Chemical mapping of a 177-nucleotide RNA with 2A3 and DMS. The RNA was probed in 150 mM KOAc, 10 mM MgCl2 and 150 mM bicine (pH 8.5) at 24 C.
[RMDB]
RNA sequence: GGGAACGACUCGAGUAGAGUCGAAAAGGCGUAAAGGGCGCGUAGGCGGAUUAUCAAGUCUCUUGUGAAAUCUAAUGGCUUAACCAUUAAACUGCUUGGGAAACUGAUAGUCUAGAGUGAGGGAGAGUGUAUCGAGCAACUUCGGUUGCUCGAUACAAAAAGAAACAACAACAACAAC
Reactivity to 2A3 in 0.01 (KOAc 150mM, MgCl2 10mM, bicine 150mM(pH8.5), 24C), signal-to-noise 2, nucleotides 027 to 126: g050g010c080g060u100a020a120a030g020g030g000c020g000c020g030u010a050g000g090c080g020g020a040u010u000a020u040c000a010a020g080u010c020u000c020u030u040g010u010g080a040a020a010u050c020u020a000a000u000g000g040c040u110u220a080a080c010c000a010u000u010a010a040a050c120u260g000c000u000u000g010g000g010a030a000a000c000u000g000a000u000a000g030u000c000u020a020g020a000g070u100g020a000g010g060g010a030g010a030g100
Reactivity to DMS in 0.01 (KOAc 150mM, MgCl2 10mM, bicine 150mM(pH8.5), 24C), signal-to-noise 2, nucleotides 027 to 126: g020g000c080g000u070a090a110a150g000g000g010c000g000c060g000u000a080g000g000c070g000g000a010u000u000a020u000c000a000a020g000u010c000u000c010u000u010g010u000g000a060a180a090u010c130u010a000a000u000g000g000c200u020u060a180a270c050c000a000u000u010a020a020a040c130u050g020c000u000u030g000g000g000a010a040a080c030u010g010a010u000a010g000u000c000u000a040g000a070g060u010g000a080g010g000g000a080g030a080g010

Reactivities are rounded to 0.1 and cut off at 0 and 3. For 2A3, 1,173 sequencing reads were counted. The DMS profile rests on 2,370 reads.